[RMDB]
RNA sequence: GGGAACGACUCGAGUAGAGUCGAAAAAGCGCACUAUAGCGACGGCCAUCGUUGUAGGUAGCAGAACUACUGAGUACGCUACUUGAUACGUGAAUCGCCACACGUUAAAAAAGGCAGUCAUGCUGGCCGUCAUAGUUGUGUUCGCACAACUAUGACGAAAAGAAACAACAACAACAAC
Reactivity to 2A3 in 0.01 (KOAc 150mM, MgCl2 10mM, bicine 150mM(pH8.5), 24C), signal-to-noise 6, nucleotides 027 to 126: a000g050c040g040c020a030c050u050a030u040a110g030c020g020a030c010g040g000c010c000a050u070c030g060u020u060g050u060a030g040g020u020a010g020c030a010g050a060a010c050u170a030c030u100g040a000g030u040a040c030g010c010u040a050c010u070u100g110a090u110a150c020g010u020g050a050a120u100c050g010c040c000a020c000a000c010g140u230u230a020a060a000a010a000a000g040g000c030a010g080u110c020a040u160g030c050u030g010g000c000
Reactivity to DMS in 0.01 (KOAc 150mM, MgCl2 10mM, bicine 150mM(pH8.5), 24C), signal-to-noise 5, nucleotides 027 to 126: a080g030c040g010c070a150c040u010a050u020a080g020c050g010a020c030g010g010c010c010a090u010c040g010u020u000g000u010a080g000g020u000a040g000c010a090g000a070a190c060u000a100c110u000g010a060g000u010a110c120g000c010u000a040c030u000u000g010a090u020a090c000g000u000g000a050a120u020c100g020c010c020a050c010a010c020g010u010u060a000a010a020a020a070a170g010g030c010a070g010u030c090a040u010g010c050u010g000g010c050